[RMDB]
RNA sequence: GGGAACGACUCGAGUAGAGUCGAAAACUUCACUUCCCUGGUGAUGGUUAUCGGAAGUGGGCAGUCAAUCUCAGUAUCUCAGCACAAAGGUGUAUCUCUCCUUUCACCAGGUUGCCUCGUGGCUGUAGACUCGACCUGGAUUCGUCCAGGUCGAGUCAAAAGAAACAACAACAACAAC
Reactivity to DMS in 0.01 (KOAc 150mM, MgCl2 10mM, bicine 150mM(pH8.5), 24C), signal-to-noise 1, nucleotides 027 to 126: c030u000u010c080a060c060u000u000c010c010c040u020g000g000u000g030a070u000g030g000u010u000a100u000c160g040g000a030a030g020u000g000g010g000c100a040g000u000c140a050a090u010c020u000c060a070g000u000a100u020c050u000c030a110g000c030a040c050a030a100a050g000g020u000g010u000a100u010c040u020c030u020c080c010u000u020u000c030a090c040c000a050g010g010u000u020g000c010c000u000c200g000u020g000g010c030u000g020u000a140
Reactivity to 2A3 in 0.01 (KOAc 150mM, MgCl2 10mM, bicine 150mM(pH8.5), 24C), signal-to-noise 1, nucleotides 027 to 126: c000u050u030c010a020c020u090u000c010c000c020u010g000g070u010g010a080u080g000g200u110u120a060u120c020g060g000a020a020g010u060g020g020g000c010a030g020u060c040a010a140u010c030u010c020a020g050u030a080u000c050u000c000a000g020c020a010c040a060a140a080g140g000u020g050u070a140u080c120u000c010u010c000c000u050u070u020c000a020c000c000a010g050g090u080u090g030c020c000u040c060g100u120g000g050c020u040g070u080a020